[RMDB]
RNA sequence: GGGAACGACUCGAGUAGAGUCGAAAAGGACCAGCCCAGCUUGAGAAUCGGGUGGCUUCGUCACCUGAAUUGUAGUCUGGAGAGGCGUCCUCAGCGACGGACCGGGCCCAAGUUCCCUGGAAAGGGAGUCAGAUUUCCUAUUCGUAGGAAAUCUGACAAAAGAAACAACAACAACAAC
Reactivity to 2A3 in 0.01 (KOAc 150mM, MgCl2 10mM, bicine 150mM(pH8.5), 24C), signal-to-noise 7, nucleotides 027 to 126: g020g000a010c020c040a020g090c010c000c000a000g010c010u080u090g180a060g110a170a100u030c010g010g000g020u010g000g000c010u170u170c220g010u010c010a000c000c000u020g060a110a050u040u030g080u070a020g040u070c010u020g040g020a090g040a070g110g030c070g010u020c000c000u030c030a060g070c030g030a020c010g040g040a010c010c010g020g000g020c020c080c020a020a030g030u020u030c000c000c000u010g030g060a130a040a030g080g020g010a050
Reactivity to DMS in 0.01 (KOAc 150mM, MgCl2 10mM, bicine 150mM(pH8.5), 24C), signal-to-noise 3, nucleotides 027 to 126: g000g000a080c010c010a180g000c080c010c000a030g010c030u010u000g000a090g050a060a080u010c000g000g020g020u000g020g000c040u010u020c280g000u000c000a020c020c010u010g010a010a020u020u000g020u030a050g010u040c000u000g010g000a160g000a130g000g020c090g010u000c000c000u010c110a210g000c040g000a090c080g000g000a070c020c020g020g000g000c040c060c120a070a140g010u000u000c010c000c010u000g000g020a060a120a040g000g000g010a110
Structure probing data (2A3 and DMS) for a 177-nucleotide construct. It was measured as part of the RMDB libraries RFM100 and RFMREP.